[RMDB]
RNA sequence: GGGAACGACUCGAGUAGAGUCGAAAAGAUAUGGAAGUCUGUGAGGGAGCUGCGGAUCGGAAACGAUCCGUAGCUUUGAUCUCAAGACUUCCUAAGUCAAAAUCCCCUUAAGUUCGCUUAAGGGGAACAUGUGCGAUAGGUUCGCCUAUCGCACAUGAAAAGAAACAACAACAACAAC
Reactivity to DMS in 0.01 (KOAc 150mM, MgCl2 10mM, bicine 150mM(pH8.5), 24C), signal-to-noise 1, nucleotides 027 to 126: g000a040u000a300u010g000g000a010a000g000u000c000u000g000u000g020a010g020g010g000a000g030c000u000g000c000g010g000a030u030c020g020g000a050a050a120c010g020a030u000c000c000g020u000a010g010c010u000u000u040g000a100u010c010u010c000a120a020g010a020c000u000u000c010c000u000a000a070g000u000c020a110a100a150a230u000c000c000c000c000u010u000a000a000g000u000u000c300g030c020u000u000a000a010g010g030g000g000a010a010